[RMDB]
RNA sequence: GGGAACGACUCGAGUAGAGUCGAAAAGUCUAGAGGUUCGCCUCUAGACAAAGAACGCUAAUUCGCUAAGCGAGGCCGCGAGAGCGGCCAUACGCGAAGAUAAAAGAGCCCUGUUCGCAGGGCUCAAUCUAAUCCGUAAGUUCGCUUACGGAUUAGAAAAAGAAACAACAACAACAAC
Reactivity to 2A3 in 0.01 (KOAc 150mM, MgCl2 10mM, bicine 150mM(pH8.5), 24C), signal-to-noise 2, nucleotides 027 to 126: g010u020c000u000a000g000a020g040g010u090u090c220g090c050c000u010c000u000a000g000a000c010a000a000a000g000a110a010c040g000c050u050a080a250u080u010c010g020c030u050a030a030g060c040g080a100g000g030c000c000g020c020g020a050g000a020g190c030g060g070c050c010a020u040a010c010g000c030g030a000a020g040a070u220a070a160a010a040g020a000g000c020c020c020u000g040u040u090c190g000c060a000g010g000g000c000u010c000a000a000
Reactivity to DMS in 0.01 (KOAc 150mM, MgCl2 10mM, bicine 150mM(pH8.5), 24C), signal-to-noise 2, nucleotides 027 to 126: g000u000c000u000a000g010a010g020g020u000u010c270g050c000c000u000c000u010a010g010a010c000a030a070a120g020a100a190c070g000c050u010a080a110u000u000c010g000c000u000a070a120g000c010g000a140g020g050c000c000g020c000g000a170g000a300g040c000g000g010c000c000a010u000a020c140g000c000g020a020a040g000a140u000a070a060a130a130g000a000g010c020c000c000u000g000u000u020c170g000c000a030g000g010g000c010u000c010a000a000
Notes: Chemical mapping of a 177-nucleotide RNA with 2A3 and DMS. Conditions: 150 mM KOAc, 10 mM MgCl2 and 150 mM bicine (pH 8.5), 24 C. Values cover nucleotides 27 to 126. The 2A3 profile rests on 1,642 reads.